The record gives the reactivity of an RNA of 207 nucleotides to DMS and 2A3. For 2A3 the reverse transcriptase was SuperScript II with manganese.

RNA sequence: GGGAACGACUCGAGUAGAGUCGAAAAAUAUGGUUCGCCAUAUAAGUUCCGUAGGGCUAUUGUAAGAGGUAUGGGCAAUGUGGACUUCGAAAGAGGUCCAUGACCCAUACUACCCACCUUAUGUAGCCCUAAACGGGUGGUCACACUUCGGUGUGAAAGGCAUAUACGAUUUCGAUCGUAUAUGCCUAAAAGAAACAACAACAACAAC
Reactivity to DMS in 0.01 (KOAc 150mM, MgCl2 10mM, bicine 150mM(pH8.5), 24C), signal-to-noise 1, nucleotides 027 to 156: a050u000a000u000g000g000u000u010c300g040c030c010a000u010a020u000a060a150g010u000u010c010c020g060u020a020g030g000g090c000u000a020u020u020g070u000a040a010g000a170g050g030u000a000u010g000g020g030c040a040a100u000g060u010g000g010a040c020u000u000c000g020a160a150a300g010a010g000g010u000c020c030a010u000g010a050c000c010c000a030u000a000c010u040a020c000c010c020a300c100c000u010u000a050u000g040u000a050g000c000c010c000u010a010a000a080c000g000g030g010u010g000g010u010c020a000c000a000c020u000u010c300g050g010u000g040u000g000a030a130
Reactivity to 2A3 in 0.01 (KOAc 150mM, MgCl2 10mM, bicine 150mM(pH8.5), 24C), signal-to-noise 2, nucleotides 027 to 156: a000u010a010u010g000g060u060u060c160g080c090c000a010u040a000u000a020a020g120u120u060c010c000g000u020a030g000g000g000c010u000a010u130u300g050u070a020a010g000a000g000g030u010a000u010g000g000g000c060a060a020u090g000u000g050g000a000c000u000u000c000g030a090a080a060g000a030g000g050u010c000c020a000u010g010a010c010c000c000a000u000a000c000u000a000c010c020c000a110c020c000u000u000a000u020g050u010a000g020c020c020c030u000a000a020a000c030g030g010g040u090g120g000u020c020a010c000a030c000u050u130c300g060g050u000g000u010g020a120a020

The DMS profile rests on 2,641 reads. For DMS the reverse transcriptase was MarathonRT. It was measured as part of the RMDB library RNAMAK.